Source: RMDB library OK2TST, as collected in RNAgym. Structure probing data (DMS) for a 177-nucleotide construct. The RNA was probed in 150 mM KOAc, 10 mM MgCl2 and 150 mM bicine (pH 8.5) at 24 C. For DMS, 973 sequencing reads were counted. DMS adducts were read by reverse transcription with MarathonRT.

RNA sequence: GGGAACGACUCGAGUAGAGUCGAAAAAACUGAAUCACCCCUUCUUCAUUAAGAUGCUGGCGCAUUAUUGCUGCUGCUUGCUGGCGAGUUUGUGCGUCCGAUUCACUGACCGCGUUGAUAGCCGCAAUAACACCUUGGAGUUCGCUCCAAGGUGUUAAAAAGAAACAACAACAACAAC
Reactivity to DMS in 0.01 (KOAc 150mM, MgCl2 10mM, bicine 150mM(pH8.5), 24C), signal-to-noise 1, nucleotides 027 to 126: a080a030c060u000g000a080a070u000c080a170c070c000c010c080u000u000c050u000u020c130a140u000u000a070a070g010a020u000g010c130u000g000g010c020g030c040a040u010u000a060u000u000g020c040u010g000c050u000g010c050u000u000g000c090u000g040g000c050g010a090g020u000u000u000g000u000g020c050g010u010c100c050g000a070u010u000c020a070c030u000g010a100c050c050g030c050g000u030u000g000a130u000a140g000c030c000g000c050a070a100